[RMDB]
RNA sequence: GGGAACGACUCGAGUAGAGUCGAAAACAAUGGCGAGGGACAGUCGGCGCUUGUUGCCGCCGCUCAGGGACGCGGCAGGCUGGUUGCGGAACGGGUACAGGCCCAGCUCUUUGAGCAGCACGUGCACCCUCCCGCUAGGAUUCGUCCUAGCGGGAGGAAAAGAAACAACAACAACAAC
Reactivity to 2A3 in 0.01 (KOAc 150mM, MgCl2 10mM, bicine 150mM(pH8.5), 24C), signal-to-noise 3, nucleotides 027 to 126: c060a070a100u100g080g000c040g000a030g060g020g000a030c050a070g060u060c020g020g020c010g010c030u070u020g090u070u090g060c020c020g020c000c030g040c010u020c080a040g000g080g040a020c040g000c040g030g010c030a030g050g000c020u030g050g040u130u130g070c040g020g040a120a110c040g030g000g000u100a060c020a050g070g030c000c020c000a000g020c000u000c000u110u090u200g040a070g010c030a000g000c010a000c080g020u060g030c000a050c000
Reactivity to DMS in 0.01 (KOAc 150mM, MgCl2 10mM, bicine 150mM(pH8.5), 24C), signal-to-noise 1, nucleotides 027 to 126: c050a130a190u030g000g000c040g020a060g000g000g020a140c160a170g020u040c080g000g000c020g050c060u010u050g000u060u040g000c150c020g000c000c050g000c030u010c100a140g090g000g000a180c150g010c080g000g000c020a120g050g020c010u020g000g000u010u050g020c070g000g000a000a110c250g000g000g010u000a020c100a120g000g000c000c000c050a030g000c030u000c000u000u030u010g000a080g000c020a110g000c040a060c020g000u000g000c110a050c150